[RMDB]
RNA sequence: GGGAACGACUCGAGUAGAGUCGAAAACUCUUAUUGUUGAGGCCUCUCUAACAAUGAAAUUUGAUACCCUUCGCAGAGUUAUUUGCCGAAUCGUAAGAUGUCCAGAUUUUUCAUUUUUGGUGCAUCUCAUUUGUCCAUUAUUCGUAAUGGACAAAUGAAAAGAAACAACAACAACAAC
Reactivity to DMS in 0.01 (KOAc 150mM, MgCl2 10mM, bicine 150mM(pH8.5), 24C), signal-to-noise 6, nucleotides 027 to 126: c070u000c040u010u010a060u000u000g000u010u000g010a070g010g010c160c210u020c020u010c040u020a050a040c050a020a050u000g000a040a050a100u020u020u010g000a130u010a090c030c010c020u000u010c060g000c050a050g000a060g010u020u030a080u010u010u010g010c030c040g010a040a050u020c100g020u020a070a040g010a010u010g000u000c020c010a020g000a020u010u020u040u040u030c170a130u010u010u000u000u000g010g020u020g000c020a010u010c010u000
Reactivity to 2A3 in 0.01 (KOAc 150mM, MgCl2 10mM, bicine 150mM(pH8.5), 24C), signal-to-noise 9, nucleotides 027 to 126: c020u020c010u040u090a050u030u040g030u010u020g040a050g060g050c020c020u130c000u000c040u100a030a020c010a030a050u070g070a060a060a060u120u080u090g090a080u140a150c020c010c000u010u040c050g000c040a020g010a010g080u140u100a210u090u110u080g100c050c030g050a050a080u080c040g040u060a050a030g000a010u020g020u010c010c000a010g020a060u060u050u030u110u170c130a190u030u030u030u060u040g030g000u110g020c010a010u010c000u000